[RMDB]
RNA sequence: GGGAACGACUCGAGUAGAGUCGAAAAACUAGUAUGUACAGGGGUGAGUUGACCUGUCAUCUAGACUGCUGACCGUCAACUCACCGGUCAGCUGGAUGAUGUCCACAGAGUACGACAUCAGUACUCAGAGUAAGGAAUCGUUCGCGGUUCUUUACUCAAAAGAAACAACAACAACAAC
Reactivity to DMS in 0.01 (KOAc 150mM, MgCl2 10mM, bicine 150mM(pH8.5), 24C), signal-to-noise 9, nucleotides 027 to 126: a200c010u000a010g010u050a020u000g000u060a010c010a030g000g000g000g010u010g000a030g010u000u010g010a060c010c050u000g010u000c000a010u000c010u000a050g000a150c100u010g010c030u000g000a010c010c300g000u000c020a010a020c020u000c010a020c040c010g000g000u000c010a010g000c010u010g000g000a130u020g010a070u020g010u010c010c030a110c200a100g000a040g010u000a020c030g010a150c160a100u040c110a080g010u000a010c010u000c020a170
Reactivity to 2A3 in 0.01 (KOAc 150mM, MgCl2 10mM, bicine 150mM(pH8.5), 24C), signal-to-noise 9, nucleotides 027 to 126: a000c010u010a010g050u110a100u140g070u100a010c010a020g100g030g010g060u080g050a060g020u040u040g060a060c010c030u020g010u000c000a000u000c000u020a050g100a180c070u050g000c000u000g000a000c000c010g000u020c010a030a030c020u010c020a020c010c000g000g000u000c000a000g000c000u020g020g020a080u100g020a030u090g090u040c010c010a060c060a080g030a000g020u030a010c040g080a030c080a160u120c050a060g010u010a010c000u010c030a010